[RMDB]
RNA sequence: GGGAACGACUCGAGUAGAGUCGAAAAAAGUCGAUCUUCUGCCAGGGGGAUUACGACGGUGACUAAGUACCUCGUAGAGAUUUGCACCUUCCACGGUCCGACCCGGCAACGUCGCUGGCAUCGCGUCAGGUUGACCUUGAUUCGUCAAGGUCAACCUAAAAGAAACAACAACAACAAC
Reactivity to DMS in 0.01 (KOAc 150mM, MgCl2 10mM, bicine 150mM(pH8.5), 24C), signal-to-noise 1, nucleotides 027 to 126: a040a040g010u010c030g030a050u000c060u000u000c130u000g010c010c060a130g010g000g000g000g000a120u000u010a100c090g000a020c070g020g020u000g000a170c110u000a100a050g000u000a060c020c000u010c060g000u010a060g030a080g020a040u010u020u010g010c100a030c060c030u010u000c010c060a090c170g000g020u000c030c010g000a220c040c000c030g000g000c040a070a010c190g010u000c060g030c030u010g000g010c070a100u000c030g020c140g010u000c100